[RMDB]
RNA sequence: GGGAACGACUCGAGUAGAGUCGAAAACGCAAAGCUGCAGCGCGGCGCUCUGGAGGCCUUGCCCCGCGCACUGCUCUUUACAUGGCCCGACGUGAGGGCACUUCGCGGGCAGUGCUGCGGCCUCCUGAAACUGCCCCUAAGUUCGCUUAGGGGCAAAUAUUAUUGUAGUCUUCGGACUACAAUAAUAAAAAGAAACAACAACAACAAC
Reactivity to DMS in 0.01 (KOAc 150mM, MgCl2 10mM, bicine 150mM(pH8.5), 24C), signal-to-noise 2, nucleotides 027 to 156: c070g000c040a080a060a120g060c050u000g040c040a130g020c040g020c060g050g030c050g010c100u010c070u000g000g000a050g040g020c000c050u010u000g010c070c000c030c070g010c110g000c000a030c030u000g010c000u000c020u020u000u010a090c040a080u010g020g020c020c010c000g000a240c170g030u010g000a190g010g010g000c010a020c000u000u000c090g040c270g030g010g010c010a050g020u000g010c000u000g040c020g050g030c000c000u000c000c010u000g000a060a070a050c090u000g000c020c000c000c000u000a030a020g010u000u010c220g040c010u000u000a010g020g000g030g050c010a000a010a010
Reactivity to 2A3 in 0.01 (KOAc 150mM, MgCl2 10mM, bicine 150mM(pH8.5), 24C), signal-to-noise 2, nucleotides 027 to 156: c060g020c030a000a090a140g010c010u140g040c100a110g080c020g030c010g130g000c020g000c050u030c050u030g000g000a010g010g000c020c020u040u100g050c030c000c010c010g050c000g000c000a000c010u000g020c000u010c010u140u220u110a070c050a090u140g040g000c020c010c020g050a080c120g150u160g090a220g000g040g000c060a100c000u110u090c090g010c060g030g000g000c000a000g020u010g030c030u080g010c030g000g000c010c000u020c000c010u000g010a020a010a000c040u020g000c000c000c000c000u010a000a010g010u040u080c080g060c170u000u000a000g000g000g000g010c000a000a000a000
Structure probing data (DMS and 2A3) for a 207-nucleotide construct. The RNA was probed in 150 mM KOAc, 10 mM MgCl2 and 150 mM bicine (pH 8.5) at 24 C. 2A3 adducts were read by reverse transcription with SuperScript II with manganese.